RNA sequence: GGGAACGACUCGAGUAGAGUCGAAAAUUUGAAUGAUCCUAUGGUAAUUGCAAUAGCAAAUGCACAUCUUCUUUCAAAUCAAGGUGCAAUGCAAGACAGAUUGGGAUCGUCCUGCAGUACAAUGCCAUAUCAUCAGCGGAUUCGUCCGCUGAUGAUAAAAAGAAACAACAACAACAAC
Reactivity to 2A3 in 0.01 (KOAc 150mM, MgCl2 10mM, bicine 150mM(pH8.5), 24C), signal-to-noise 1, nucleotides 027 to 126: u030u060u100g110a130a070u130g010a030u000c000c030u060a040u060g000g070u130a080a120u050u040g000c060a090a300u020a200g020c010a010a090a250u080g030c010a010c000a200u000c000u010u030c040u000u200u140c090a060a090a110u060c040a130a000g020g000u040g010c020a070a050u040g000c000a010a040g020a010c030a020g130a070u060u130g150g020g030a060u020c010g030u000c010c040u020g000c000a000g020u040a010c070a050a140u100g030c040c000a000
Reactivity to DMS in 0.01 (KOAc 150mM, MgCl2 10mM, bicine 150mM(pH8.5), 24C), signal-to-noise 1, nucleotides 027 to 126: u000u010u020g030a050a100u000g010a020u000c030c010u010a040u000g000g020u000a140a150u000u000g000c010a120a160u020a150g030c100a020a080a210u000g000c010a040c020a080u000c060u020u000c030u000u000u000c220a020a090a040u000c210a040a080g030g020u000g000c000a130a060u000g000c040a000a020g000a050c060a080g010a060u000u000g010g010g030a280u000c030g000u000c010c020u000g000c040a010g000u000a010c210a030a050u010g000c020c070a210

An RNA of 177 nucleotides, treated with 2A3 and DMS and read out base by base. For 2A3 the reverse transcriptase was SuperScript II with manganese. Source: RMDB library OK2TST, as collected in RNAgym. The 2A3 profile rests on 791 reads. Conditions: 150 mM KOAc, 10 mM MgCl2 and 150 mM bicine (pH 8.5), 24 C.